This 177-nucleotide RNA was probed chemically with 2A3 and DMS. DMS adducts were read by reverse transcription with MarathonRT. The reactions ran in a buffer of 150 mM KOAc, 10 mM MgCl2 and 150 mM bicine (pH 8.5), at 24 C. For 2A3, 4,002 sequencing reads were counted. It was measured as part of the RMDB library RFMREP.
[RMDB]
RNA sequence: GGGAACGACUCGAGUAGAGUCGAAAAACACAACAUUGAUUAAUCUUAUUUUUGGUCUCCGUGGCAGGGCCCCUGUGCUUGCGCAUGCCUUGCCACACAGUGUCAUCGGGCUUACACUAUCCCCGAUCCUAUAGAUAUGCUUCGGCAUAUCUAUAGGAAAAGAAACAACAACAACAAC
Reactivity to 2A3 in 0.01 (KOAc 150mM, MgCl2 10mM, bicine 150mM(pH8.5), 24C), signal-to-noise 4, nucleotides 027 to 126: a010c040a010c030a120a050c020a110u080u140g040a070u110u210a120a090u090c060u110u200a220u190u170u040u060u050g060g000u030c020u010c090c070g000u010g000g000c000a000g010g000g000c000c000c000c010u010g000u010g010c020u150u110g020c010g010c020a000u210g000c000c010u000u000g000c030c010a000c000a000c000a000g040u060g030u020c010a040u030c020g000g000g040c010u030u080a030c090a020c090u080a100u100c020c000c000c000g000a030u010
Reactivity to DMS in 0.01 (KOAc 150mM, MgCl2 10mM, bicine 150mM(pH8.5), 24C), signal-to-noise 2, nucleotides 027 to 126: a040c070a060c090a050a040c070a080u000u000g010a080u000u000a050a090u010c100u000u000a120u000u000u000u000u000g010g000u000c020u010c130c150g040u010g000g000c030a000g000g000g000c030c010c040c030u010g000u000g010c050u000u020g040c030g030c000a010u010g000c010c000u000u000g020c010c010a000c010a010c170a090g000u000g020u000c090a110u000c040g000g030g010c210u000u000a080c120a070c130u000a070u000c150c010c000c070g010a050u000